This 177-nucleotide RNA was probed chemically with DMS and 2A3.
The reactions ran in a buffer of 150 mM KOAc, 10 mM MgCl2 and 150 mM bicine (pH 8.5), at 24 C.
Reactivities are given for positions 27 through 126.
For 2A3 the reverse transcriptase was SuperScript II with manganese.
The 2A3 profile rests on 565 reads.
For DMS the reverse transcriptase was MarathonRT.
[RMDB]
RNA sequence: GGGAACGACUCGAGUAGAGUCGAAAAGAAAGAAAGAAAGACAUGGUACUUCUGCUGAGAACCAGCAGCCCUGAAAAAUGGGAGAAUGCACACCCCUGUUUGAGAAAGAACAGGGGGCGGCUUUUAAUCCGCUAACUUUUUUCGAAAAGUUAGCGGAAAAAGAAACAACAACAACAAC
Reactivity to DMS in 0.01 (KOAc 150mM, MgCl2 10mM, bicine 150mM(pH8.5), 24C), signal-to-noise 2, nucleotides 027 to 126: g000a140a130a120g000a070a050a040g010a100a110a040g000a050c070a040u010g000g010u000a060c060u020u010c010u000g020c020u030g020a140g000a150a300c100c030a010g040c010a040g010c000c000c030u000g000a020a040a070a020a100u050g010g010g010a150g040a070a000u030g000c010a090c060a160c000c000c000c000u020g000u010u000u000g000a150g020a140a060a190g000a010a020c010a000g010g000g000g010g000c100g000g000c070u000u000u020u000a080a120
Reactivity to 2A3 in 0.01 (KOAc 150mM, MgCl2 10mM, bicine 150mM(pH8.5), 24C), signal-to-noise 1, nucleotides 027 to 126: g030a000a040a000g070a060a050a000g110a010a180a030g070a040c070a050u110g000g070u150a120c010u110u080c000u040g030c010u020g060a100g010a260a040c040c000a000g030c000a000g100c000c020c010u070g040a110a060a070a050a050u150g010g010g010a080g000a000a010u110g000c030a050c000a070c100c000c010c010u020g110u000u000u010g080a070g100a010a190a000g030a000a000c000a000g000g000g000g000g000c020g000g000c020u040u020u000u030a020a070